[RMDB]
Source information:
An RNA of 177 nucleotides, treated with DMS and 2A3 and read out base by base. Values cover nucleotides 27 to 126. For 2A3 the reverse transcriptase was SuperScript II with manganese. The data come from the RNA Mapping Database (RMDB), library RFMREP.

RNA sequence: GGGAACGACUCGAGUAGAGUCGAAAAUAACGGAACCCAUAAUGCAGCUGUUUGGUUGAUUGAUUGACAGCUGUCUGUGGAUUCCGUGCCCAAAACUCUCAGCUGUAUCUUCGGAUACAGCUGAGAGCCACUACUAUACGUUCGCGUAUAGUAGUGGAAAAGAAACAACAACAACAAC
Reactivity to DMS in 0.01 (KOAc 150mM, MgCl2 10mM, bicine 150mM(pH8.5), 24C), signal-to-noise 3, nucleotides 027 to 126: u020a140a020c000g010g010a010a010c000c000c000a020u000a030a100u000g010c000a010g010c000u010g010u000u000u010g050g010u000u000g010a190u020u030g000a040u000u000g000a000c000a010g000c000u000g010u010c170u000g040u000g000g000a040u000u000c000c010g010u010g000c000c000c000a090a060a100a280c010u000c000u000c000a010g010c000u000g000u000a000u000c010u000u020c200g010g000a010u000a010c000a010g010c000u000g010a000g000a010g000
Reactivity to 2A3 in 0.01 (KOAc 150mM, MgCl2 10mM, bicine 150mM(pH8.5), 24C), signal-to-noise 7, nucleotides 027 to 126: u120a020a010c000g000g010a010a000c020c010c010a000u070a040a050u130g000c010a000g000c010u020g080u120u180u260g190g050u150u130g190a300u220u300g030a040u050u060g010a060c000a010g000c010u000g010u000c010u030g010u010g000g000a010u010u030c010c000g000u010g000c000c000c000a040a090a080a080c000u020c000u000c000a010g000c000u010g000u010a000u000c010u030u130c260g080g000a010u000a000c000a000g020c010u000g000a000g010a000g010